Record summary
The data come from the RNA Mapping Database (RMDB), library RFMREP. Chemical mapping of a 177-nucleotide RNA with 2A3 and DMS. The RNA was probed in 150 mM KOAc, 10 mM MgCl2 and 150 mM bicine (pH 8.5) at 24 C. DMS adducts were read by reverse transcription with MarathonRT. 2A3 adducts were read by reverse transcription with SuperScript II with manganese. For 2A3, 3,089 sequencing reads were counted.
RNA sequence: GGGAACGACUCGAGUAGAGUCGAAAAAUAUUUCGGGAAUAUAGGCAUAAUGCCCGUUAAUACUUGAACGUAUUAUGCUGAUAUUCACGAGAUCCAAAACUGCCAUCUCGCUUCGGCGAGAUGGCAGGUCGUACUAUUGGUUCGCCAAUAGUACGACAAAAGAAACAACAACAACAAC
Reactivity to 2A3 in 0.01 (KOAc 150mM, MgCl2 10mM, bicine 150mM(pH8.5), 24C), signal-to-noise 3, nucleotides 027 to 126: a000u140a050u020u040u020c000g010g010g000a000a000u030a000u040a090g010g000c000a000u000a020a010u030g040c050c080c020g020u030u060a130a120u210a300c160u120u300g100a040a000c010g020u020a000u000u000a000u000g000c010u020g010a010u010a000u000u000c000a000c000g010a010g000a010u000c010c000a000a060a040a140c010u010g000c000c010a010u000c010u000c020g020c030u090u050c210g110g000c050g000a000g010a000u010g000g000c000a000g000
Reactivity to DMS in 0.01 (KOAc 150mM, MgCl2 10mM, bicine 150mM(pH8.5), 24C), signal-to-noise 2, nucleotides 027 to 126: a140u020a070u000u020u000c000g010g000g010a020a000u010a030u000a250g000g010c000a000u000a010a000u000g000c180c300c070g000u000u000a080a060u020a130c230u000u030g010a050a050c080g000u000a000u000u010a020u010g000c000u000g000a030u000a000u000u000c000a000c010g000a000g000a010u000c060c010a110a040a070a300c000u000g010c010c000a000u000c000u000c010g000c000u000u000c170g010g020c000g060a000g020a010u010g000g020c010a000g010